The record gives the reactivity of an RNA of 207 nucleotides to 2A3.
The RNA was probed in 150 mM KOAc, 10 mM MgCl2 and 150 mM bicine (pH 8.5) at 24 C.
RNA sequence: GGGAACGACUCGAGUAGAGUCGAAAAGAAAUUACGUUUCCUUUACACGUCUCAAACCGGGAUCAAGAGAAGCAAAGCAUCCCUCAUAUCCACGAUGGAGGGUGUCGUGGAGUAUACUGUACCAAAAAGAGCGAACACGGCUUCGGCCGUGUUCGAAGAAGUUGUACUCGUUCGCGAGUACAACUUCAAAAGAAACAACAACAACAAC
Reactivity to 2A3 in 0.01 (KOAc 150mM, MgCl2 10mM, bicine 150mM(pH8.5), 24C), signal-to-noise 2, nucleotides 027 to 156: g040a000a080a050u210u080a040c060g010u000u000u020c010c000u040u050u100a070c070a020c050g030u000c020u030c080a140a120a030c060c070g000g040g000a010u050c040a110a010g020a030g010a130a000g000c030a080a080a000g010c050a090u010c030c050c000u020c020a180u200a070u070c010c000a000c030g000a020u030g080g090a050g050g090g010u120g010u030c000g020u010g000g000a000g000u020a020u010a040c060u040g110u200a070c030c030a040a120a070a030a000g110a010g090c000g020a010a000c000a000c010g010g060c050u120u110c230g020g000c000c100g000u000g000u000u000c000g000a000a000